[RMDB]
Annotation
The data come from the RNA Mapping Database (RMDB), library OK2TST. Chemical mapping of a 177-nucleotide RNA with 2A3 and DMS. The RNA was probed in 150 mM KOAc, 10 mM MgCl2 and 150 mM bicine (pH 8.5) at 24 C.

RNA sequence: GGGAACGACUCGAGUAGAGUCGAAAAGGGACCGAAAACAGCGACUGAUUCGGGUAAAUCGUCCCAGUUGAAUACGUCGUCGUUGACGAUAAGCCGAUCACCCAGCUCAUUCCAGGCGGCAGGCCAGCAUUCCGUAAGUUUUCGAACUUACGGAAUGAAAAGAAACAACAACAACAAC
Reactivity to 2A3 in 0.01 (KOAc 150mM, MgCl2 10mM, bicine 150mM(pH8.5), 24C), signal-to-noise 5, nucleotides 027 to 126: g030g000g030a050c030c030g040a050a010a010a060c040a000g040c020g060a020c050u070g030a080u060u040c040g010g020g020u110a120a160a090u140c070g040u030c000c010c010a000g050u100u180g090a080a050u110a090c070g010u010c000g000u000c070g070u070u140g020a020c000g000a030u020a120a010g050c010c000g030a060u070c020a050c010c000c000a020g010c020u030c030a050u120u030c030c010a020g020g010c010g060g040c040a030g060g020c020c000a030g000
Reactivity to DMS in 0.01 (KOAc 150mM, MgCl2 10mM, bicine 150mM(pH8.5), 24C), signal-to-noise 8, nucleotides 027 to 126: g000g000g010a110c060c030g000a060a070a080a080c100a080g010c020g020a030c030u000g010a180u000u000c020g020g000g010u000a050a100a110u020c120g010u000c000c010c010a160g010u020u010g010a070a070u010a060c120g000u000c010g010u000c060g010u000u010g000a120c040g010a060u000a050a110g010c020c020g000a080u010c080a100c050c020c010a070g010c040u000c070a080u000u000c060c050a090g000g000c050g010g010c060a070g000g010c040c050a110g010
The DMS profile rests on 11,498 reads.